RNA sequence: GGGAACGACUCGAGUAGAGUCGAAAAGUUGCUCCGGCGUCAGAAACGUCCAUGCAACAAAUCGGCUGACUUUCUGCCCCUGAGCCAUAUCAAUGGUACGAACUUCAACCGCAUUGGCGUAACGCAGCAUACGGUUGGAUUUCGAUCCAACCGUAUGAAAAGAAACAACAACAACAAC
Reactivity to 2A3 in 0.01 (KOAc 150mM, MgCl2 10mM, bicine 150mM(pH8.5), 24C), signal-to-noise 4, nucleotides 027 to 126: g010u030u030g000c020u010c050c050g000g020c040g010u060c070a060g160a140a140a010c030g000u000c030c040a070u140g020c000a040a060c010a050a170a040u100c060g050g000c020u020g020a040c010u030u070u010c020u050g030c010c000c000c020u020g050a020g020c030c020a050u080a020u100c090a120a050u050g000g020u060a050c080g050a070a040c040u120u040c050a040a030c020c010g020c060a090u010u130g060g000c020g030u050a070a010c060g000c030a020g000
Reactivity to DMS in 0.01 (KOAc 150mM, MgCl2 10mM, bicine 150mM(pH8.5), 24C), signal-to-noise 6, nucleotides 027 to 126: g020u010u010g010c000u000c300c190g020g000c080g000u000c060a120g020a060a100a080c100g020u000c050c160a140u020g000c010a050a070c090a050a080a080u010c150g010g000c020u000g000a080c020u000u010u010c020u000g000c080c030c040c030u000g010a110g010c030c080a070u000a080u010c100a080a080u000g000g000u010a080c100g000a030a040c090u000u010c080a030a080c050c020g010c130a080u010u000g010g000c040g010u000a060a070c070g010c110a120g010
Record summary:
Structure probing data (2A3 and DMS) for a 177-nucleotide construct. The data come from the RNA Mapping Database (RMDB), library OK2TST. For DMS, 5,996 sequencing reads were counted. For 2A3, 5,865 sequencing reads were counted. The reactions ran in a buffer of 150 mM KOAc, 10 mM MgCl2 and 150 mM bicine (pH 8.5), at 24 C. For 2A3 the reverse transcriptase was SuperScript II with manganese.